Source: RMDB library M2RFPK, as collected in RNAgym. An RNA of 207 nucleotides, treated with DMS and 2A3 and read out base by base. The reactions ran in a buffer of 150 mM KOAc, 10 mM MgCl2 and 150 mM bicine (pH 8.5), at 24 C. Reactivities are given for positions 27 through 156. For DMS, 2,591 sequencing reads were counted.

[RMDB]
RNA sequence: GGGAACGACUCGAGUAGAGUCGAAAACUCCACGCUGGGUAAUGGACGACGGCGGCGUGUGGCGAACAGGGAUACCGGUAGUCAGUGUCUGGAACAUCCCAAGGGGCGGCGGAGCGAGCACCCCGACAAAACGGGCACAAGUUCGCUUGUGCCCGAACAAAAAUAACGUCUUCGGACGUUAUUUUUGAAAAGAAACAACAACAACAAC
Reactivity to DMS in 0.01 (KOAc 150mM, MgCl2 10mM, bicine 150mM(pH8.5), 24C), signal-to-noise 1, nucleotides 027 to 156: c040u000c020c010a100c110g010c040u000g000g000g020u000a050a130u000g020g000a070c010g000a070c020g010g000c000g030g000c020g020u020g030u000g010g000c020g000a070a120c100a150g000g020g000a140u000a130c020c040g030g030u000a100g020u000c030a140g010u010g010u000c060u010g020g020a050a070c080a130u000c000c010c010a080a140g020g000g010g020c030g000g000c050g020g020a110g000c050g020a030g020c040a070c040c000c020c010g010a120c100a060a070a080a170c020g050g020g030c000a040c010a010a020g020u000u000c290g000c010u010u020g000u000g000c000c010c010g000a000a030
Reactivity to 2A3 in 0.01 (KOAc 150mM, MgCl2 10mM, bicine 150mM(pH8.5), 24C), signal-to-noise 3, nucleotides 027 to 156: c020u010c000c010a050c040g040c020u070g000g040g060u110a100a090u100g050g010a030c040g010a020c030g050g030c010g010g000c020g020u100g040u060g030g040c060g030a060a030c050a100g060g020g010a020u040a120c010c000g040g040u060a050g110u040c050a020g050u030g040u090c040u020g000g000a050a050c010a090u010c000c010c020a060a110g000g010g000g000c040g020g040c030g020g080a070g050c040g010a000g010c010a040c000c000c010c010g020a010c030a010a090a020a020c010g000g010g000c000a010c000a000a000g020u040u110c140g020c110u010u000g000u000g020c000c010c000g010a000a000